[RMDB]
RNA sequence: GGGAACGACUCGAGUAGAGUCGAAAAACAAAUCAAACAAUAAUUUCGCAGUAGCUGCGUAAUAGCCACUGCAUCGCCUAACAGCAUCUCCUACGUGCUGUUAACGCGAUUCAACCCUAGUAGGAUAUGCUAAACACUGCCGCUUGAAGUCUGUUUACGAAUUAAUUACCUUCGGGUAAUUAAUUCGAAAAGAAACAACAACAACAAC
Reactivity to 2A3 in 0.01 (KOAc 150mM, MgCl2 10mM, bicine 150mM(pH8.5), 24C), signal-to-noise 4, nucleotides 027 to 156: a000c040a050a070a070u290c110a040a100a170c120a070a140u280a180a120u120u250u220c080g000c000a000g010u090a020g030c040u090g060c090g170u210a070a130u140a140g000c010c020a000c010u010g010c010a000u020c000g000c010c000u000a010a000c010a000g000c000a000u000c030u030c120c000u040a000c010g000u000g000c000u000g010u010u000a010a050c000g010c000g040a020u140u110c030a020a130c010c010c020u020a020g010u010a000g010g000a020u020a020u050g010c000u080a040a100a000c030a020c040u050g030c000c060g160c130u040u080g120a070a020g030u020c070u050g050u060u080u070a050